[RMDB]
RNA sequence: GGGAACGACUCGAGUAGAGUCGAAAAUUGAAGUUCACCUUCCCGAUGUGCACGAACGGAUCUCAGGAGUUGACUUGGGUCUCCCGAACUGGGGGAAGUAUGUAUUACUGAGUGCAGGGGCCCUGACGUCUUUCCGCAAGUUCGCUUGCGGAAAGACAAAAGAAACAACAACAACAAC
Reactivity to 2A3 in 0.01 (KOAc 150mM, MgCl2 10mM, bicine 150mM(pH8.5), 24C), signal-to-noise 1, nucleotides 027 to 126: u000u080g140a030a000g020u000u030c010a000c050c110u060u000c060c000c000g030a100u110g090u110g060c040a010c000g000a090a000c000g040g000a000u000c050u060c140a060g070g000a130g080u020u020g130a070c000u020u060g030g030g030u000c000u070c020c060c040g170a250a100c240u230g000g000g060g030g000a000a000g080u080a040u040g140u030a150u240u000a010c110u000g090a000g010u040g060c030a010g010g020g000g000c000c100c000u050g010a000c040
Reactivity to DMS in 0.01 (KOAc 150mM, MgCl2 10mM, bicine 150mM(pH8.5), 24C), signal-to-noise 1, nucleotides 027 to 126: u010u000g030a120a100g000u140u000c050a060c030c020u000u000c000c000c120g000a050u040g020u000g060c040a030c090g000a060a070c040g000g000a150u060c150u120c000a050g000g000a180g000u070u040g000a020c060u000u020g000g040g050u000c000u000c030c000c050g010a100a250c100u060g010g010g000g000g000a010a000g000u000a040u080g000u000a030u000u050a000c040u000g000a160g000u000g000c080a250g000g010g000g020c000c070c000u020g000a160c040